[RMDB]
Source information: Chemical mapping of a 177-nucleotide RNA with 2A3 and DMS. 2A3 adducts were read by reverse transcription with SuperScript II with manganese. Conditions: 150 mM KOAc, 10 mM MgCl2 and 150 mM bicine (pH 8.5), 24 C. DMS (dimethyl sulfate) methylates the pairing face of unpaired adenines and cytosines. For DMS the reverse transcriptase was MarathonRT.
RNA sequence: GGGAACGACUCGAGUAGAGUCGAAAAUUCAGGAUCGACAGAGGCGAUUUGUUUAGCAAGCUCUUCCAAUGCACUGAUAUUUAAUGUGGUAUCAAGAAUAGAUUGCUUAAAGAUAUUUAGCACAUCCGAUACCCUGAGUAUUCGUACUCAGGGUAUCAAAAGAAACAACAACAACAAC
Reactivity to 2A3 in 0.01 (KOAc 150mM, MgCl2 10mM, bicine 150mM(pH8.5), 24C), signal-to-noise 4, nucleotides 027 to 126: u050u040c020a010g040g000a040u050c020g030a020c070a070g100a060g110g010c020g000a020u030u040u120g100u050u090u030a020g000c030a070a000g000c010u010c000u030u000c020c010a070a030u100g000c020a000c070u040g010a030u040a080u140u170u130a150a100u120g040u080g020g030u050a030u100c040a080a000g020a050a020u050a060g060a060u000u100g000c000u080u110a070a050a010g050a040u060a140u170u090u050a040g040c020a000c000a070u020c030c030
Reactivity to DMS in 0.01 (KOAc 150mM, MgCl2 10mM, bicine 150mM(pH8.5), 24C), signal-to-noise 4, nucleotides 027 to 126: u010u010c060a100g000g010a050u010c040g010a120c120a090g010a100g020g000c090g010a060u000u010u000g010u000u000u000a070g010c030a040a050g010c020u000c050u000u000c030c070a080a080u000g020c100a090c090u000g000a060u000a050u010u000u020a090a070u020g000u000g000g030u000a040u000c070a090a120g000a050a070u000a040g010a040u010u010g010c030u010u010a030a040a080g010a060u000a030u000u000u000a090g000c040a050c070a060u000c100c120